The record gives the reactivity of an RNA of 177 nucleotides to 2A3. 2A3 adducts were read by reverse transcription with SuperScript II with manganese. For 2A3, 533 sequencing reads were counted. Reactivities are given for positions 27 through 126. The data come from the RNA Mapping Database (RMDB), library OK1LIB.
RNA sequence: GGGAACGACUCGAGUAGAGUCGAAAACAGACUCGAGCGAAAGCUCGGCGAAAGCCGCGUACAUGUGAACGUCGGCUAGUGUACAGUCGACAGUUACUCUUCGGAGUAACAAUAGAAACAACAACAACCAUCGCCUACGGUUCGCCGUAGGCGAUGGAAAAGAAACAACAACAACAAC
Reactivity to 2A3 in 0.01 (KOAc 150mM, MgCl2 10mM, bicine 150mM(pH8.5), 24C), signal-to-noise 1, nucleotides 027 to 126: c070a000g180a000c060u060c000g000a000g080c000g160a050a020a000g000c000u020c020g000g000c000g050a120a030a000g000c000c000g030c030g080u000a020c080a050u120g050u150g250a080a000c000g000u050c000g090g000c000u060a050g190u000g080u140a080c000a010g000u000c010g050a000c010a040g000u000u000a000c000u000c000u030u020c100g150g000a000g000u000a000a000c000a000a010u130a040g020a050a080a000c020a040a020c000a040a020c010a000a030